The data come from the RNA Mapping Database (RMDB), library OK2TRN. This 177-nucleotide RNA was probed chemically with 2A3 and DMS. Values cover nucleotides 27 to 126.
RNA sequence: GGGAACGACUCGAGUAGAGUCGAAAAGCGGGUACAGCCGGCGAAGGCGCGGACGCCCUGGCGGCCGAUGGUGAGCAGCACCCGCUCACCGUGCGCGGACAGCGCCUCGGCGGCCGCCGCCAGGUCAUGACGGUAUAUGGUUCGCCAUAUACCGUCAAAAAGAAACAACAACAACAAC
Reactivity to 2A3 in 0.01 (KOAc 150mM, MgCl2 10mM, bicine 150mM(pH8.5), 24C), signal-to-noise 1, nucleotides 027 to 126: g020c010g000g030g020u200a140c130a080g100c040c040g030g040c030g050a120a050g060g000c020g000c010g030g000a000c020g000c000c000c010u030g010g000c000g020g020c030c010g010a010u120g010g010u010g000a000g000c030a000g090c030a130c010c080c020g000c010u000c000a000c000c020g030u080g030c150g000c100g000g020a130c080a120g050c030g000c030c000u050c000g040g020c010g000g020c000c000g000c000c000g000c000c010a020g000g030u100c040a060
Reactivity to DMS in 0.01 (KOAc 150mM, MgCl2 10mM, bicine 150mM(pH8.5), 24C), signal-to-noise 3, nucleotides 027 to 126: g030c040g010g030g000u000a100c140a160g010c010c020g040g020c030g010a100a110g010g030c050g020c040g020g010a060c020g010c030c010c040u010g010g000c030g010g020c020c020g000a050u010g010g000u010g000a020g000c020a150g000c150a110c160c080c080g030c000u000c000a010c000c020g020u010g000c150g000c060g000g010a110c120a160g020c020g000c000c040u000c260g000g010c030g010g000c010c000g000c040c030g030c010c030a040g010g010u020c110a140

Record summary: DMS (dimethyl sulfate) methylates the pairing face of unpaired adenines and cytosines.